[RMDB]
RNA sequence: GGGAACGACUCGAGUAGAGUCGAAAAAUUCAGUUCAAGUUUGUAGUAAGUCCAACUAAAGAUGUUCAUCAGAAUUACUCAAAGAGCAGUUUCAAGAUGCAGAGAACUUCCAUUCAGGAUCCUAGGAGGUUUGCAUGUUGUAAAAGCUUUGCUGGGACGUAACAAAACUUUUCGAAGUUUUGUUACGAAAAGAAACAACAACAACAAC
Reactivity to DMS in 0.01 (KOAc 150mM, MgCl2 10mM, bicine 150mM(pH8.5), 24C), signal-to-noise 2, nucleotides 027 to 156: a080u000u010c040a170g030u000u000c020a070a070g010u000u010u010g030u010a070g020u010a030a050g020u000c010c010a050a110c080u000a100a060a050g010a080u010g020u010u000c030a020u000c050a130g000a060a020u000u000a030c020u000c050a050a060a110g010a060g040c010a070g000u000u000u000c030a070a090g000a060u000g000c020a080g010a190g020a010a040c020u000u010c000c040a170u010u000c080a120g030g000a130u000c070c030u000a250g000g020a060g010g040u000u000u020g020c020a050u010g000u010u000g000u010a010a040a070a160g010c030u000u010u000g010c040u000g000g020g010a250
Reactivity to 2A3 in 0.01 (KOAc 150mM, MgCl2 10mM, bicine 150mM(pH8.5), 24C), signal-to-noise 2, nucleotides 027 to 156: a010u070u030c010a020g040u050u040c070a110a070g030u050u090u080g090u130a090g040u030a060a020g040u000c050c040a050a020c130u150a010a110a120g080a060u030g070u150u050c020a120u040c010a100g060a060a100u080u060a050c010u010c100a060a100a010g090a010g000c030a030g030u050u080u000c040a050a010g030a080u000g000c030a000g090a040g070a190a030c060u020u000c000c000a040u030u150c050a020g070g120a100u060c020c020u040a010g010g000a010g000g000u030u010u020g000c030a030u020g100u120u000g000u040a020a060a040a060g020c000u050u030u020g040c070u020g000g000g050a030

Source: RMDB library OK3TST, as collected in RNAgym. The record gives the reactivity of an RNA of 207 nucleotides to DMS and 2A3. As a SHAPE reagent, 2A3 marks flexible, mostly unpaired nucleotides at the ribose 2'-OH. Reactivities are given for positions 27 through 156. For DMS the reverse transcriptase was MarathonRT. 2A3 adducts were read by reverse transcription with SuperScript II with manganese.